[RMDB]
Description: Source: RMDB library TTRDEL, as collected in RNAgym. Structure probing data (DMS and 2A3) for a 177-nucleotide construct. DMS adducts were read by reverse transcription with MarathonRT. The 2A3 profile rests on 7,738 reads. The reactions ran in a buffer of 150 mM KOAc, 10 mM MgCl2 and 150 mM bicine (pH 8.5), at 24 C.
RNA sequence: GGGAACGACUCGAGUAGAGUCGAAAAGAUAUGGAUCCGACCGGAGCAACAGCUCGGAAACGAGACAUGCUCAUGGUACGGAUCCUAAGUCAAAAUCUUCACCUAAGCUUCGGCUUAGGUGAAGAAACUUAAAGAAGUGGUUCGCCACUUCUUUAAGAAAAGAAACAACAACAACAAC
Reactivity to DMS in 0.01 (KOAc 150mM, MgCl2 10mM, bicine 150mM(pH8.5), 24C), signal-to-noise 5, nucleotides 027 to 126: g010a040u010a300u000g010g010a000u000c000c000g010a080c000c000g010g020a010g010c000a020a090c250a180g020c010u000c000g010g000a070a090a230c010g000a010g010a030c100a250u000g000c000u000c000a040u010g020g020u000a070c020g000g000a000u000c000c000u000a010a080g010u010c030a120a080a110a110u000c000u000u000c000a000c000c000u000a000a010g000c000u000u010c230g010g010c000u000u000a000g000g000u000g000a010a000g000a010a040a090
Reactivity to 2A3 in 0.01 (KOAc 150mM, MgCl2 10mM, bicine 150mM(pH8.5), 24C), signal-to-noise 3, nucleotides 027 to 126: g010a010u070a040u150g000g000a000u010c010c010g010a010c010c000g010g000a010g010c010a010a150c050a160g060c010u000c000g020g020a070a060a010c020g000a000g030a040c040a080u090g010c000u010c020a180u170g010g000u140a300c010g000g000a000u000c000c000u000a010a000g030u000c030a060a000a000a300u010c000u000u010c000a000c000c000u020a000a000g010c000u030u230c300g110g000c000u030u000a000g000g000u010g000a000a000g000a000a000a000